Chemical mapping of a 207-nucleotide RNA with DMS and 2A3. The reactions ran in a buffer of 150 mM KOAc, 10 mM MgCl2 and 150 mM bicine (pH 8.5), at 24 C. For 2A3 the reverse transcriptase was SuperScript II with manganese. Source: RMDB library OK3TST, as collected in RNAgym.
RNA sequence: GGGAACGACUCGAGUAGAGUCGAAAAGAAGCAGUCCUUAUUGUGUGUGAUGUUUAGUCAUCGCACUGUGCCUACGGGCUGCCAACGUAGGGCCAAUGUGCCGAGAGGCACUAGAAGUACGGCUUAUUAUGACGCAUCGCCGUACCAAAGAUGCUGAAGUACUAUGAGCUUUCGAGCUCAUAGUACUAAAAGAAACAACAACAACAAC
Reactivity to DMS in 0.01 (KOAc 150mM, MgCl2 10mM, bicine 150mM(pH8.5), 24C), signal-to-noise 2, nucleotides 027 to 156: g040a150a100g010c020a030g050u000c030c010u010u000a060u000u000g020u000g010u000g010u000g020a020u000g040u010u000u010a270g020u020c000a010u010c000g040c000a020c010u010g040u020g010c050c040u010a100c180g000g010g000c010u000g000c030c050a040a040c080g030u000a070g010g040g040c030c060a050a150u000g010u000g020c000c000g010a210g000a300g020g000c010a020c010u000a070g010a160a070g020u000a010c030g020g020c020u010u010a140u010u010a090u010g000a210c190g010c070a120u000c120g040c010c000g030u000a020c020c030a130a080a110g000a190u000g010c000u020g000a120
Reactivity to 2A3 in 0.01 (KOAc 150mM, MgCl2 10mM, bicine 150mM(pH8.5), 24C), signal-to-noise 3, nucleotides 027 to 156: g130a030a010g000c000a000g000u050c010c010u090u060a220u210u240g090u010g010u000g000u010g010a020u010g090u050u200u230a260g130u160c000a000u010c010g010c010a000c010u040g020u070g080c020c030u030a040c020g000g000g000c000u010g010c000c010a080a010c070g110u120a090g000g070g000c010c000a040a110u190g020u080g030c020c000g050a070g000a010g000g010c000a010c000u020a020g060a110a020g030u020a000c010g000g000c000u010u020a080u160u110a100u110g130a050c130g000c120a060u040c020g000c000c000g010u010a010c000c010a000a020a050g040a070u050g000c020u040g030a060